Source: RMDB library OK1LIB, as collected in RNAgym. Chemical mapping of a 177-nucleotide RNA with 2A3 and DMS. The RNA was probed in 150 mM KOAc, 10 mM MgCl2 and 150 mM bicine (pH 8.5) at 24 C. For DMS the reverse transcriptase was MarathonRT. The DMS profile rests on 2,597 reads.
RNA sequence: GGGAACGACUCGAGUAGAGUCGAAAAGAAGGCGCUGCGAAUCUUGCCGUCGAGCAGCGGCCGCAGCCAUUGCGCCCGUUGCUGCUCGGUGCCGAACAUGUGCAGGAUCUCCAUGUUGCCGGUGUCCCCCUAAUGCAGCUUUCGAGCUGCAUUAGGGAAAAGAAACAACAACAACAAC
Reactivity to 2A3 in 0.01 (KOAc 150mM, MgCl2 10mM, bicine 150mM(pH8.5), 24C), signal-to-noise 8, nucleotides 027 to 126: g120a030a040g010g000c010g000c030u050g040c100g020a010a020u020c010u030u010g010c010c000g020u030c010g000a000g000c000a000g000c000g000g000c030c020g010c020a030g070c080c120a230u180u210g010c040g010c030c050c020g080u100u090g010c000u000g010c000u000c010g000g010u090g020c050c050g170a170a110c070a180u200g090u210g020c010a010g010g030a030u010c020u000c130c000a040u140g010u060u300g060c020c010g000g000u030g040u020c010c000
Reactivity to DMS in 0.01 (KOAc 150mM, MgCl2 10mM, bicine 150mM(pH8.5), 24C), signal-to-noise 2, nucleotides 027 to 126: g000a100a200g010g020c000g020c010u000g010c180g000a080a010u000c000u000u000g020c020c000g010u000c030g000a010g000c000a010g000c020g000g000c150c030g000c030a020g020c170c150a090u030u000g010c080g030c300c040c220g000u010u010g010c000u000g000c000u000c010g020g060u000g000c090c170g000a140a170c180a120u000g020u080g000c000a040g040g000a030u010c070u050c000c010a020u020g000u000u040g040c000c030g000g060u020g000u010c030c030